[RMDB]
RNA sequence: GGGAACGACUCGAGUAGAGUCGAAAAUCAUGGCCAGUCGGCGUCAACACCGUGCCGGCAGAUCAUCCCUCUUGGCCAAGUACAAUGUGGUUGGAGGACAGGAGGUAACGUCAAGGAAUGGUGGCGCAGGUGCUGCACCUUUCGAGGUGCAGCACCUAAAAGAAACAACAACAACAAC
Reactivity to 2A3 in 0.01 (KOAc 150mM, MgCl2 10mM, bicine 150mM(pH8.5), 24C), signal-to-noise 1, nucleotides 027 to 126: u000c010a000u060g040g020c000c040a010g000u000c000g020g090c070g180u190c050a050a050c030a000c020c120g070u140g040c000c080g000g040c000a000g000a000u100c140a070u000c020c000c000u010c000u000u050g000g000c020c000a050a050g040u050a060c150a170a280u110g020u050g140g000u250u000g010g050a000g020g010a000c000a080g000g010a000g000g030u010a020a000c070g000u000c000a030a000g020g010a190a060u210g000g000u050g060g000c000g030c130